RNA sequence: GGGAACGACUCGAGUAGAGUCGAAAAGAGAUGGACAUUUCCUGUUCAGCCACACACACACACACACAAAGAUGUCCAUCUUAGGUGAACAAAAGUGAGUGAGUGAGUGUGAAACAAGGGCAACAAGGGGUAAUACUUUCUUCGGAAAGUAUUACCCAAAAGAAACAACAACAACAAC
Reactivity to DMS in 0.01 (KOAc 150mM, MgCl2 10mM, bicine 150mM(pH8.5), 24C), signal-to-noise 2, nucleotides 027 to 126: g020a110g050a010u000g000g000a020c090a080u020u000u000c000c000u010g010u000u000c120a130g020c130c000a130c000a050c030a050c000a090c000a060c010a000c020a170c010a020c000a030a070a040g010a200u000g000u000c040c000a020u000c000u030u000a040g110g000u020g010a070a070c080a040a090a160a080g000u000g040a140g030u000g020a040g000u000g000a070g000u000g010u000g000a110a030a050c300a040a050g000g000g000c090a180a040c160a070a090g000
Reactivity to 2A3 in 0.01 (KOAc 150mM, MgCl2 10mM, bicine 150mM(pH8.5), 24C), signal-to-noise 3, nucleotides 027 to 126: g050a000g030a050u060g010g010a010c000a030u050u040u110c040c030u020g070u080u090c060a020g000c000c010a020c000a000c000a000c000a000c000a000c010a000c000a010c000a000c020a010a140a070g070a040u010g020u000c020c000a000u000c010u010u060a060g030g060u130g040a060a010c060a060a110a030a020g130u100g080a080g000u010g020a030g010u020g010a080g060u010g010u000g030a000a000a010c100a090a080g090g020g010c000a030a030c030a030a170g000
Description:
An RNA of 177 nucleotides, treated with DMS and 2A3 and read out base by base. Values cover nucleotides 27 to 126.